This 207-nucleotide RNA was probed chemically with 2A3.
It was measured as part of the RMDB library OK3TST.
RNA sequence: GGGAACGACUCGAGUAGAGUCGAAAAGUGACCCGCGUUAUAAUGGUUACGUUGCUGAUAUGAAACGUAAAGGAAUACCUUUUGGUAGCUAUGCUUUUUGUAGAUUCGUAUCUAUUAAUGAUGCUAAGAAAGAAGCACAAGAUUUCUGGGAACGUGGGACCAUCCCUUCAUUCGUGAAGGGAUGGUCAAAAGAAACAACAACAACAAC
Reactivity to 2A3 in 0.01 (KOAc 150mM, MgCl2 10mM, bicine 150mM(pH8.5), 24C), signal-to-noise 1, nucleotides 027 to 156: g080u130g050a010c010c010c010g000c050g000u080u050a060u050a190a130u130g060g000u030u000a000c020g000u070u030g080c050u170g040a260u110a080u260g160a110a000a000c010g010u000a090a180a000g070g110a040a040u020a070c010c000u000u010u070u300g060g050u110a020g000c030u030a030u140g020c000u080u090u010u020u030g020u080a060g000a130u000u060c050g000u020a010u000c110u020a000u180u180a300a160u140g030a030u030g000c040u060a040a020g040a150a080a000g020a050a000g000c000a010c020a080a030g050a120u050u200u000c030u000g030g000g020a060a000c020g050u030g060g010